[RMDB]
RNA sequence: GGGAACGACUCGAGUAGAGUCGAAAACUGGGCACCCGCCGAUGGCUGCCGACGUGCACGCACACCAUCUCGCCGCGGUCACACAUGUUGACGACAUGCUGCCGCGAUACCCCGAGUAUCUGCGCGGAAGAUACGUUAUAUUCGUAUAACGUAUCUUAAAAGAAACAACAACAACAAC
Reactivity to 2A3 in 0.01 (KOAc 150mM, MgCl2 10mM, bicine 150mM(pH8.5), 24C), signal-to-noise 9, nucleotides 027 to 126: c020u030g000g030g000c030a040c020c030c020g020c060c040g120a140u130g050g000c050u030g020c020c010g060a120c050g050u070g010c030a020c080g020c000a030c010a020c050c020a060u030c020u030c050g050c020c010g030c020g030g040u090c030a020c000a000c000a090u040g060u050u120g220a100c140g020a010c000a010u030g020c020u050g020c020c010g000c010g010a010u080a070c010c000c010c030g030a050g050u030a050u050c060u100g010c030g000c020g050g030
Reactivity to DMS in 0.01 (KOAc 150mM, MgCl2 10mM, bicine 150mM(pH8.5), 24C), signal-to-noise 9, nucleotides 027 to 126: c070u000g010g010g010c040a100c070c030c050g020c070c070g000a080u010g010g010c170u000g010c050c020g010a070c100g010u000g010c050a070c090g010c050a060c090a080c050c040a050u000c030u000c050g020c070c030g010c030g010g000u000c100a070c180a120c050a020u000g010u000u010g010a130c190g010a150c030a020u000g000c250u000g000c030c010g010c010g000a050u000a070c040c030c060c060g000a120g010u000a040u000c040u010g020c040g010c050g010g000